Structure probing data (2A3 and DMS) for a 177-nucleotide construct.
DMS adducts were read by reverse transcription with MarathonRT.
The data come from the RNA Mapping Database (RMDB), library OK2TRN.
The DMS profile rests on 1,069 reads.
For 2A3, 1,190 sequencing reads were counted.
As a SHAPE reagent, 2A3 marks flexible, mostly unpaired nucleotides at the ribose 2'-OH.
The reactions ran in a buffer of 150 mM KOAc, 10 mM MgCl2 and 150 mM bicine (pH 8.5), at 24 C.
RNA sequence: GGGAACGACUCGAGUAGAGUCGAAAAGGAUGCCCAGCGGCUCAAGCAGAAAGAACCCUACGAGCAACAACACAAGGACUAUCCAGCCAGCCUUAAACGUUGCCGGGUCCUUUAUUGCGCUGGCAGGCGCCACGGAUACUUUCGAGUAUCCGUGGCGAAAAGAAACAACAACAACAAC
Reactivity to 2A3 in 0.01 (KOAc 150mM, MgCl2 10mM, bicine 150mM(pH8.5), 24C), signal-to-noise 1, nucleotides 027 to 126: g040g060a020u100g000c000c000c090a000g040c040g060g000c030u040c100a000a070g020c070a040g130a060a080a000g000a010a020c000c000c040u090a090c130g060a050g110c000a010a010c000a000a030c030a000c060a070a000g010g070a150c010u050a100u140c020c000a000g000c000c020a000g000c000c010u040u040a090a040a000c060g020u000u000g000c000c040g000g010g000u010c000c000u130u080u050a290u120u130g000c080g060c000u040g020g000c000a020g100g060
Reactivity to DMS in 0.01 (KOAc 150mM, MgCl2 10mM, bicine 150mM(pH8.5), 24C), signal-to-noise 2, nucleotides 027 to 126: g000g020a110u000g000c130c000c020a100g020c060g000g040c060u010c060a090a260g030c040a030g010a020a000a060g020a040a030c030c010c020u000a130c300g000a140g020c000a030a020c030a070a100c210a070c240a040a010g000g000a110c120u010a080u020c020c020a070g000c050c090a100g010c000c000u000u000a030a050a090c160g020u000u000g020c010c040g000g000g000u000c010c000u000u000u010a020u020u000g000c020g000c030u000g010g000c040a120g010g020